Chemical mapping of a 177-nucleotide RNA with DMS. It was measured as part of the RMDB library OK2TST. DMS adducts were read by reverse transcription with MarathonRT. For DMS, 2,076 sequencing reads were counted. Conditions: 150 mM KOAc, 10 mM MgCl2 and 150 mM bicine (pH 8.5), 24 C.
RNA sequence: GGGAACGACUCGAGUAGAGUCGAAAACACUACGCGUAAAAAACGUGCCACGAUCGAUCCAAACACCGACAAGAGCGAUUCGAGACGUGGGGAGACCGAUCACCGACCGAGCGGCCGAAUCGAGGGGCGCAGGGAGGGGAUUCGUCCCCUCCCUGCGAAAAGAAACAACAACAACAAC
Reactivity to DMS in 0.01 (KOAc 150mM, MgCl2 10mM, bicine 150mM(pH8.5), 24C), signal-to-noise 3, nucleotides 027 to 126: c070a120c170u000a070c050g010c020g010u030a000a100a110a060a050a030c050g020u000g030c020c030a060c070g010a140u000c030g020a050u010c010c040a080a140a130c130a060c090c040g000a060c170a070a110g000a120g010c070g020a070u000u000c050g000a090g010a090c040g020u010g020g000g000g000a070g030a060c060c030g000a050u000c040a100c050c030g000a040c040c040g000a060g020c060g000g000c020c020g000a050a060u000c080g020a070g010g010g010g020